[RMDB]
The record gives the reactivity of an RNA of 177 nucleotides to 2A3. It was measured as part of the RMDB library OK1LIB. Conditions: 150 mM KOAc, 10 mM MgCl2 and 150 mM bicine (pH 8.5), 24 C.

RNA sequence: GGGAACGACUCGAGUAGAGUCGAAAACAACCUCUUGCACAUCCUUUCCUUGCAUCAGCCUGUGCCAGGGUCUUCAUCGGAAGGGAUGGAAAGUGGAGCACACGGGCACAGGCCUGAAGCAUCAUCGGAGUAGCCGUGAGUUCGCUCACGGCUACUCAAAAGAAACAACAACAACAAC
Reactivity to 2A3 in 0.01 (KOAc 150mM, MgCl2 10mM, bicine 150mM(pH8.5), 24C), signal-to-noise 3, nucleotides 027 to 126: c060a080a150c010c010u100c020u060u130g070c040a010c000a090u100c030c000u010u070u090c010c020u030u040g010c000a030u010c000a010g000c020c020u000g020u000g010c000c000a070g080g050g000u010c000u020u030c000a040u090c000g160g200a160a100g240g070g010a030u110g010g080a030a030a020g020u040g020g010a010g000c080a000c000a030c100g000g000g000c000a000c000a000g000g010c010c010u020g000a010a000g010c010a020u070c040a050u050c030g080